[RMDB]
This 177-nucleotide RNA was probed chemically with DMS and 2A3.
Conditions: 150 mM KOAc, 10 mM MgCl2 and 150 mM bicine (pH 8.5), 24 C.
Values cover nucleotides 27 to 126.
RNA sequence: GGGAACGACUCGAGUAGAGUCGAAAAUGGCCUUUAUCGGCGGCUUUCUUUGUACUGGUGACAGCAUCCACUGCAUCCUCAUGGAUCAGCAGCAAUCCUUUGCGAGGAUGAUCCAUAGAGUCAAAGGUAUACCAUGAAAUUUCGAUUUCAUGGUAUAAAAAGAAACAACAACAACAAC
Reactivity to DMS in 0.01 (KOAc 150mM, MgCl2 10mM, bicine 150mM(pH8.5), 24C), signal-to-noise 9, nucleotides 027 to 126: u020g010g010c010c010u000u000u010a100u010c200g010g010c040g020g030c080u000u010u000c020u000u000u000g010u000a050c070u000g000g020u000g010a110c050a040g010c050a090u010c070c070a120c050u000g000c060a070u000c050c010u000c040a060u000g000g000a020u000c010a040g010c080a170g000c060a060a040u020c160c180u000u000u000g010c060g000a130g010g010a110u000g000a010u000c010c010a020u000a100g010a040g000u000c100a040a070a080g000g010
Reactivity to 2A3 in 0.01 (KOAc 150mM, MgCl2 10mM, bicine 150mM(pH8.5), 24C), signal-to-noise 6, nucleotides 027 to 126: u080g070g010c020c000u030u070u090a150u110c050g040g020c040g020g030c060u080u150u030c020u090u110u090g050u050a060c060u060g040g000u030g120a090c010a020g010c020a090u040c010c000a020c020u030g000c010a030u000c010c010u020c010a010u020g000g000a000u010c010a000g030c010a000g010c010a040a110u160c040c040u120u090u080g040c040g040a110g140g040a140u020g010a000u000c000c000a010u020a070g040a010g040u050c050a060a030a040g040g000